[RMDB]
RNA sequence: GGGAACGACUCGAGUAGAGUCGAAAAAAAUCACUCGAUGUUCUCACCGAAAGCACGUAAUCGCCGGUGUAACUCAUGUUGGCUGGGGGGCCUCCUGGCGCACGGCGAGGAUGGGGUGCGCUCAGAACUCAUUAUCCUUCUUCGGAAGGAUAAUGAGAAAAGAAACAACAACAACAAC
Reactivity to DMS in 0.01 (KOAc 150mM, MgCl2 10mM, bicine 150mM(pH8.5), 24C), signal-to-noise 2, nucleotides 027 to 126: a080a050a040u010c020a050c030u000c030g020a020u000g000u000u000c040u000c030a230c200c070g020a080a070a130g000c030a080c060g000u020a080a110u000c040g010c030c010g000g040u020g010u010a030a060c110u000c140a050u000g010u000u000g010g000c040u000g010g000g000g030g010g020c030c000u000c030c010u000g010g020c100g000c020a030c030g000g000c030g050a020g020g000a070u010g000g010g010g020u000g000c050g000c130u000c070a080g000a110a170
Reactivity to 2A3 in 0.01 (KOAc 150mM, MgCl2 10mM, bicine 150mM(pH8.5), 24C), signal-to-noise 2, nucleotides 027 to 126: a000a000a000u070c050a030c030u020c000g010a010u050g000u040u000c010u010c030a040c040c050g150a210a050a020g000c000a010c050g070u060a040a050u010c050g000c020c010g130g040u060g030u000a120a050c010u030c090a070u230g020u100u050g140g000c050u060g050g000g000g000g050g050c010c000u030c030c000u010g010g000c020g000c010a040c020g010g000c030g000a010g010g010a000u080g010g080g030g030u010g000c000g040c030u020c010a100g050a100a040

Background
This 177-nucleotide RNA was probed chemically with DMS and 2A3. High 2A3 reactivity points to a flexible backbone, as in loops and unpaired stretches. The 2A3 profile rests on 1,780 reads. It was measured as part of the RMDB library RFMREP. The DMS profile rests on 1,368 reads. Reactivities are given for positions 27 through 126.